[RMDB]
RNA sequence: GGGAACGACUCGAGUAGAGUCGAAAACUAUGCAGAUUCGUCUGCAUAGAGACCCGAUGAAGCGGCACUUACACAGCUUCAUACUCGUAAGAAGUGCAAUAAAGGGACGAGGGUUCGCCCUCGUCAAACCCUACGUCUAUUUCGAUAGACGUAGGGUAAAAGAAACAACAACAACAAC
Reactivity to DMS in 0.01 (KOAc 150mM, MgCl2 10mM, bicine 150mM(pH8.5), 24C), signal-to-noise 4, nucleotides 027 to 126: c020u000a000u000g010c000a010g010a030u000u010c240g010u000c000u000g000c010a000u000a010g000a100g010a170c000c000c010g020a050u000g000a000a010g020c000g000g010c000a030c040u010u000a110c120a070c110a090g010c010u000u010c030a020u000a110c090u000c210g000u000a070a080g010a040a040g010u000g020c020a220a070u020a040a070a090g000g020g000a020c000g010a010g010g000g010u000u010c250g020c000c010c000u000c010g010u000c000a010a070
Reactivity to 2A3 in 0.01 (KOAc 150mM, MgCl2 10mM, bicine 150mM(pH8.5), 24C), signal-to-noise 5, nucleotides 027 to 126: c000u000a000u000g000c000a010g020a030u030u090c090g120u010c060u000g000c000a000u000a000g000a010g010a020c020c010c000g010a050u030g000a010a010g010c060g040g010c070a000c030u050u120a040c110a010c020a060g000c000u000u020c000a010u030a040c110u100c110g090u080a050a020g040a070a000g070u010g010c030a030a080u170a190a140a050g270g040g000a000c010g000a000g040g000g000u040u070c160g120c020c010c000u000c000g000u000c000a000a000